[RMDB]
RNA sequence: GGGAACGACUCGAGUAGAGUCGAAAAGAUAUGGAUGUUAAUAUAGGUCAACAGCUCGGAAACGAGACAUGACCGUAUAACAUCCUAAGUCAAAAGGAUGAAGAAAGGUUCGCCUUUCUUCAUCCAACUAUGUUAUGUUGUUCGCAACAUAACAUAGAAAAGAAACAACAACAACAAC
Reactivity to 2A3 in 0.01 (KOAc 150mM, MgCl2 10mM, bicine 150mM(pH8.5), 24C), signal-to-noise 8, nucleotides 027 to 126: g040a020u070a050u130g000g000a010u010g020u040u020a300a030u040a120u080a300g010g000u010c020a040a040c030a280g030c000u000c000g020g000a060a080a050c010g000a000g020a030c010a020u090g000a000c000c010g000u000a000u000a000a000c000a000u000c000c000u010a060a020g060u020c030a010a010a040a190g010g000a010u010g000a000a000g000a000a010a000g030g000u070u110c170g090c000c000u000u000u000c000u000u000c000a000u010c000c000a000a000
Reactivity to DMS in 0.01 (KOAc 150mM, MgCl2 10mM, bicine 150mM(pH8.5), 24C), signal-to-noise 9, nucleotides 027 to 126: g010a040u000a300u010g000g000a010u000g000u000u000a050a070u000a020u000a070g050g000u000c000a020a120c250a170g000c000u000c000g000g010a100a070a190c010g000a010g000a040c100a170u000g000a010c000c000g010u000a000u000a020a010c000a010u000c000c000u000a020a090g010u000c030a050a060a110a100g010g010a010u000g010a010a010g010a010a010a010g000g010u000u010c260g020c000c000u000u000u000c000u000u000c000a000u000c000c000a020a050